[RMDB]
Notes: This 177-nucleotide RNA was probed chemically with DMS and 2A3. Conditions: 150 mM KOAc, 10 mM MgCl2 and 150 mM bicine (pH 8.5), 24 C. It was measured as part of the RMDB library M2PK50. For DMS, 1,780 sequencing reads were counted. High DMS reactivity at an A or C suggests that its Watson-Crick edge is free.
RNA sequence: GGGAACGACUCGAGUAGAGUCGAAAACUACAUAGUUUCGACUAUGUAGAAACCAUUAGGAAGCAUGGAGAUGCAUAUGGACGAGGGCAACUAACCUAUUGCGAACAGCAGGUUUCGACCUGCUGAAUAUGUCGAUGCUAUUCGUAGCAUCGACAUAAAAAGAAACAACAACAACAAC
Reactivity to DMS in 0.01 (KOAc 150mM, MgCl2 10mM, bicine 150mM(pH8.5), 24C), signal-to-noise 2, nucleotides 027 to 126: c000u000a000c000a020u000a010g020u010u000u020c140g010a040c000u000a000u000g010u000a000g000a090a120a180c020c010a060u000u000a110g000g020a130a090g020c030a050u000g010g000a090g010a080u000g000c020a040u000a040u010g010g010a070c090g010a040g010g000g010c050a020a070c050u000a060a090c070c020u000a100u020u010g010c080g010a120a240c010a010g010c000a010g000g000u000u000u000c220g010a020c000c000u000g000c000u000g010a030a080
Reactivity to 2A3 in 0.01 (KOAc 150mM, MgCl2 10mM, bicine 150mM(pH8.5), 24C), signal-to-noise 2, nucleotides 027 to 126: c000u000a000c000a000u000a010g020u000u040u080c220g050a010c030u030a000u030g000u010a000g010a010a010a000c030c000a010u030u120a090g110g040a090a020g010c040a030u060g070g030a080g000a040u110g030c030a040u040a080u200g070g030a040c060g030a080g020g060g000c020a080a000c010u060a030a030c010c000u040a100u070u200g090c070g050a050a020c010a020g020c010a000g020g020u010u070u040c110g060a060c010c000u000g000c010u000g010a000a010